[RMDB]
RNA sequence: GGGAACGACUCGAGUAGAGUCGAAAAGUCUCCAAUGAAAUUGCAUACUUGGCCUUCUCCGAUAGCUAUCUCUUCAAAGUUUGCUAUCUUGUCAAAGAAGAGUGAUUUCUUGGAUGGGUCAUAAGCACCUCCCUGCUACUUUCGAGUAGCAGGGAGGAAAAGAAACAACAACAACAAC
Reactivity to 2A3 in 0.01 (KOAc 150mM, MgCl2 10mM, bicine 150mM(pH8.5), 24C), signal-to-noise 3, nucleotides 027 to 126: g070u020c080u000c100c000a020a110u280g060a020a040a070u090u130g000c020a020u080a230c030u000u010g000g030c000c030u190u040c210u030c050c000g010a000u000a010g000c000u010a040u030c030u000c030u140u130c070a080a080a040g040u100u060u090g060c030u070a120u120c000u030u180g100u030c020a020a030a050g020a100a000g040a030g070u060g030a010u030u050u050c000u000u030g010g000a020u080g020g000g000u060c090a120u110a060a020g050c010a010
This 177-nucleotide RNA was probed chemically with 2A3.
2A3 adducts were read by reverse transcription with SuperScript II with manganese.
Values cover nucleotides 27 to 126.
The RNA was probed in 150 mM KOAc, 10 mM MgCl2 and 150 mM bicine (pH 8.5) at 24 C.
It was measured as part of the RMDB library OK1LIB.